[RMDB]
RNA sequence: GGGAACGACUCGAGUAGAGUCGAAAAGCAAAAGAUUAUCCAGGUGUAGCGGUGAAAUUCGUAGAGAUCUGGUGGAUAAUGAACCGGUGGCGAAGCCGAAAGAUAACCGCUGAAAAGAAGAAUUGAACAUUCCGUUGUUAUUCGUAACAACGGAAUGAAAAGAAACAACAACAACAAC
Reactivity to DMS in 0.01 (KOAc 150mM, MgCl2 10mM, bicine 150mM(pH8.5), 24C), signal-to-noise 4, nucleotides 027 to 126: g010c100a080a090a110a070g000a090u000u000a050u000c010c020a060g020g010u010g010u000a030g020c010g010g030u000g010a080a110a080u000u000c010g020u010a120g020a130g010a090u000c010u000g000g020u010g010g010a090u000a060a060u010g010a160a100c060c010g000g000u000g000g010c210g010a070a260g010c190c020g000a030a050a040g020a100u000a140a070c010c010g000c010u000g000a030a050a070a110g000a070a050g000a060a130u000u010g000a090a170
Reactivity to 2A3 in 0.01 (KOAc 150mM, MgCl2 10mM, bicine 150mM(pH8.5), 24C), signal-to-noise 1, nucleotides 027 to 126: g060c010a010a060a020a000g080a080u080u070a030u070c000c000a040g030g050u080g090u110a020g010c000g000g010u010g060a070a040a020u050u020c010g000u080a050g000a020g000a180u000c010u010g000g000u020g080g000a060u110a200a080u120g020a060a060c020c000g010g060u070g060g090c060g050a030a000g000c020c000g030a080a000a000g090a000u020a020a000c000c000g000c080u060g060a110a110a030a020g120a020a000g030a070a030u200u190g030a090a020

The data come from the RNA Mapping Database (RMDB), library M2PK90. An RNA of 177 nucleotides, treated with DMS and 2A3 and read out base by base. The 2A3 profile rests on 915 reads. Reactivities are given for positions 27 through 126. Conditions: 150 mM KOAc, 10 mM MgCl2 and 150 mM bicine (pH 8.5), 24 C. The DMS profile rests on 3,192 reads.